[RMDB]
Record summary: This 177-nucleotide RNA was probed chemically with DMS and 2A3. The DMS profile rests on 15,745 reads. Conditions: 150 mM KOAc, 10 mM MgCl2 and 150 mM bicine (pH 8.5), 24 C. For 2A3, 1,506 sequencing reads were counted. For DMS the reverse transcriptase was MarathonRT. DMS (dimethyl sulfate) methylates the pairing face of unpaired adenines and cytosines. Reactivities are rounded to 0.1 and cut off at 0 and 3.

RNA sequence: GGGAACGACUCGAGUAGAGUCGAAAACGAGUAGCUGGGAUUACAGGUGCCCACCACCACACCUGGCUGGUUUUUGUAUUUUUAAUAGAGACGGGUUUUCACCCUGUUGUUCAGGCUAGUCUCGAACUAGAACUAGUAAGUUCGCUUACUAGUUCUAAAAAGAAACAACAACAACAAC
Reactivity to DMS in 0.01 (KOAc 150mM, MgCl2 10mM, bicine 150mM(pH8.5), 24C), signal-to-noise 8, nucleotides 027 to 126: c060g010a080g020u000a020g020c010u000g000g010g000a060u000u010a060c090a050g010g010u000g010c030c040c040a140c120c020a050c020c040a070c140a070c120c090u000g000g000c130u000g000g000u000u000u010u000u000g000u000a010u010u000u010u020u010a040a090u010a100g000a050g000a040c100g010g000g010u000u010u000u010c130a100c140c010c020u000g000u000u000g000u000u000c040a080g010g010c040u000a070g010u000c010u000c010g000a080a110c180
Reactivity to 2A3 in 0.01 (KOAc 150mM, MgCl2 10mM, bicine 150mM(pH8.5), 24C), signal-to-noise 1, nucleotides 027 to 126: c000g000a020g010u050a010g010c010u010g050g000g050a070u070u040a040c010a020g020g020u060g050c020c020c000a030c000c000a030c020c020a020c000a010c000c050u000g000g050c060u020g040g000u040u090u000u110u140g070u020a130u010u130u040u050u150a150a170u060a070g030a020g000a010c030g000g060g000u060u070u140u130c030a010c000c010c010u030g050u080u020g000u020u060c000a030g000g000c000u040a030g070u050c010u000c020g030a060a010c030